[RMDB]
RNA sequence: GGGAACGACUCGAGUAGAGUCGAAAACAAGAAAUAGGAAAUGUCUCUGCUAUGCCUGGCAAUGUGCUAGACGUGAGAGCUAUAAGGCACAAUCCAUGUCUUCAAAGUUUUAGACAAUGUAGUUGGGAAGACGGGACGUCGACACAGAGAGCUAUGGUAGAUGGUCCAAAUUCGUUUGGACCAUCUAAAAAGAAACAACAACAACAAC
Reactivity to 2A3 in 0.01 (KOAc 150mM, MgCl2 10mM, bicine 150mM(pH8.5), 24C), signal-to-noise 3, nucleotides 027 to 156: c050a020a010g120a090a130a020u140a030g070g040a050a070a040u150g050u010c010u020c050u070g040c030u060a050u190g040c020c020u020g020g000c050a060a110u050g000u030g000c070u030a020g000a020c000g050u080g020a100g010a020g030c050u070a070u060a270a150g060g000c010a020c020a020a010u030c010c020a080u160g000u000c000u050u000c010a060a100a190g010u030u060u120u150a080g030a060c020a040a020u180g020u090a140g140u200u100g080g040g010a020a020g010a010c000g000g020g000a010c010g010u040c000g030a010c000a000c000a010g050a000g010a000g050c010u030a030u150g070g000
Reactivity to DMS in 0.01 (KOAc 150mM, MgCl2 10mM, bicine 150mM(pH8.5), 24C), signal-to-noise 1, nucleotides 027 to 156: c020a090a070g010a090a060a040u000a050g020g000a090a070a130u000g050u000c010u000c010u020g000c050u020a060u000g000c000c010u010g040g000c080a140a140u000g000u010g030c000u000a080g050a030c030g070u000g010a180g020a180g010c040u000a070u000a080a170g000g010c000a030c090a060a120u000c060c020a070u010g010u000c000u010u000c080a030a060a180g000u000u020u000u010a110g020a100c020a040a160u000g000u010a100g010u020u010g010g000g000a120a060g010a020c030g020g000g020a060c040g020u000c000g000a090c110a070c050a070g010a070g020a070g010c020u000a060u010g000g040
About this RNA:
Conditions: 150 mM KOAc, 10 mM MgCl2 and 150 mM bicine (pH 8.5), 24 C. Structure probing data (2A3 and DMS) for a 207-nucleotide construct. The DMS profile rests on 2,119 reads. Source: RMDB library OK3TST, as collected in RNAgym. For DMS the reverse transcriptase was MarathonRT. High DMS reactivity at an A or C suggests that its Watson-Crick edge is free. Values are in units of 0.01, from 0 to 300, in steps of 10.